Structure probing data (DMS and 2A3) for a 207-nucleotide construct. The 2A3 profile rests on 6,814 reads. Reactivities are given for positions 27 through 156. For DMS the reverse transcriptase was MarathonRT. The RNA was probed in 150 mM KOAc, 10 mM MgCl2 and 150 mM bicine (pH 8.5) at 24 C. The DMS profile rests on 15,967 reads.
RNA sequence: GGGAACGACUCGAGUAGAGUCGAAAAGUUUGCGCCAGGACUCGUUGAUCCCUCACUGGUGGCGGACGAUGAGGAUCGGGAUCCAUUUGUUGAGCGCUGCGCGGAGUGGGCGCGCAUGGUCAAGCUGUUCGAGACGAUCUUCACACGAAGCGCGCCGCUCAUUCCAGUAAUUCGUUACUGGAAUGAGAAAAGAAACAACAACAACAAC
Reactivity to DMS in 0.01 (KOAc 150mM, MgCl2 10mM, bicine 150mM(pH8.5), 24C), signal-to-noise 5, nucleotides 027 to 156: g030u010u000u010g010c020g030c010c030a120g020g000a060c030u000c020g020u010u000g010a110u000c040c010c000u000c040a140c050u000g010g010u000g030g030c050g030g010a170c030g020a080u000g010a060g010g010a050u000c040g020g010g000a100u000c020c020a170u000u000u000g020u000u010g010a100g010c020g000c030u000g020c040g020c060g020g010a140g020u000g020g000g020c010g030c010g050c010a060u000g010g020u000c060a070a150g030c060u000g000u000u000c060g000a190g020a120c030g010a110u000c040u020u000c040a120c070a110c050g010a070a100g020c030g020c020g000c010c020g000
Reactivity to 2A3 in 0.01 (KOAc 150mM, MgCl2 10mM, bicine 150mM(pH8.5), 24C), signal-to-noise 6, nucleotides 027 to 156: g050u050u090u090g030c020g000c030c030a050g030g030a060c030u050c100g060u070u080g040a060u060c020c010c000u040c060a060c030u050g030g010u030g090g040c010g020g020a030c040g060a060u060g030a030g040g020a040u070c040g020g000g040a040u010c020c030a110u090u120u150g110u040u100g030a020g020c050g000c080u060g000c040g010c050g050g020a090g040u110g010g050g000c000g000c000g000c010a030u080g030g020u040c030a050a060g020c070u080g090u150u140c070g050a040g020a100c060g020a040u020c000u060u060c100a070c000a000c090g040a050a020g010c010g000c010g000c040c010g000